Source information:
Chemical mapping of a 177-nucleotide RNA with 2A3 and DMS. DMS adducts were read by reverse transcription with MarathonRT. Reactivities are given for positions 27 through 126.
RNA sequence: GGGAACGACUCGAGUAGAGUCGAAAAUCGUUGUACACCAGCAUGCUCGUCGAGGCGUAUCAAGCGGCCAGCGUCCACGUGCAAGUGACCGAUAUGCGCGCGGCGGUCGAGCGCAACAACAAUGACGACGGGUAUACGGUUUCGACCGUAUACCCGUAAAAGAAACAACAACAACAAC
Reactivity to 2A3 in 0.01 (KOAc 150mM, MgCl2 10mM, bicine 150mM(pH8.5), 24C), signal-to-noise 2, nucleotides 027 to 126: u040c060g010u000u060g000u010a030c060a020c000c000a000g020c050a050u130g000c040u020c010g010u030c020g120a040g050g000c000g020u050a100u090c070a250a020g150c030g110g060c070c040a110g040c010g130u050c050c020a070c000g000u060g000c060a130a170g010u010g140a060c010c020g000a080u090a080u150g000c000g000c000g000c000g050g080c020g000g100u090c000g010a010g030c010g000c020a060a080c000a000a000c000a000a090u260g030a090c150g000
Reactivity to DMS in 0.01 (KOAc 150mM, MgCl2 10mM, bicine 150mM(pH8.5), 24C), signal-to-noise 1, nucleotides 027 to 126: u000c030g000u000u000g000u050a140c060a200c090c020a050g000c000a080u030g010c110u000c040g010u000c040g020a130g000g010c010g000u040a040u020c130a050a150g010c020g000g000c000c010a190g000c050g000u000c130c050a160c140g030u000g140c110a120a150g020u060g000a030c000c010g000a220u040a090u000g020c100g000c010g000c040g010g000c020g000g060u000c020g000a010g010c030g000c140a130a070c060a010a040c030a130a030u020g030a130c160g000